[RMDB]
RNA sequence: GGGAACGACUCGAGUAGAGUCGAAAAAUUCUUAAAAGUGGUAUCGCAUUUAGCCCCCCUUCGUACCAAUUCUGUUUUCGUCUCAAGCUCUUCAUUACUACAGCGCAAGUCUACCAUUACCACACCCUAACAUGCGUUUGUUCGCAAACGCAUGUUAAAAAGAAACAACAACAACAAC
Reactivity to DMS in 0.01 (KOAc 150mM, MgCl2 10mM, bicine 150mM(pH8.5), 24C), signal-to-noise 2, nucleotides 027 to 126: a160u010u000c010u000u000a030a070a030a050g000u000g000g000u010a040u010c040g020c050a060u010u060u020a080g000c000c000c020c040c020c000u000u000c030g000u000a050c050c030a050a060u030u000c040u010g000u010u000u010u000c070g010u000c000u020c060a060a070g010c040u020c010u000u000c010a020u000u000a080c090u040a090c120a040g000c010g000c060a010a120g000u040c050u000a100c070c030a100u010u000a030c030c040a080c070a130c020c020c030
Reactivity to 2A3 in 0.01 (KOAc 150mM, MgCl2 10mM, bicine 150mM(pH8.5), 24C), signal-to-noise 3, nucleotides 027 to 126: a000u040u010c030u020u030a050a060a030a050g060u050g010g010u030a040u140c040g000c120a080u110u140u140a050g010c020c000c010c000c000c000u000u070c020g050u050a050c040c040a050a080u060u050c020u040g060u050u050u000u040c030g020u030c020u020c050a060a080g010c000u010c000u080u050c050a050u050u100a040c030u050a060c040a020g030c020g000c040a070a000g000u010c040u050a060c000c020a010u000u060a010c010c010a010c000a030c020c000c000
Source: RMDB libraries RFM100 and RFMREP, as collected in RNAgym.
This 177-nucleotide RNA was probed chemically with DMS and 2A3.
For 2A3, 2,146 sequencing reads were counted.
Conditions: 150 mM KOAc, 10 mM MgCl2 and 150 mM bicine (pH 8.5), 24 C.
Values are in units of 0.01, from 0 to 300, in steps of 10.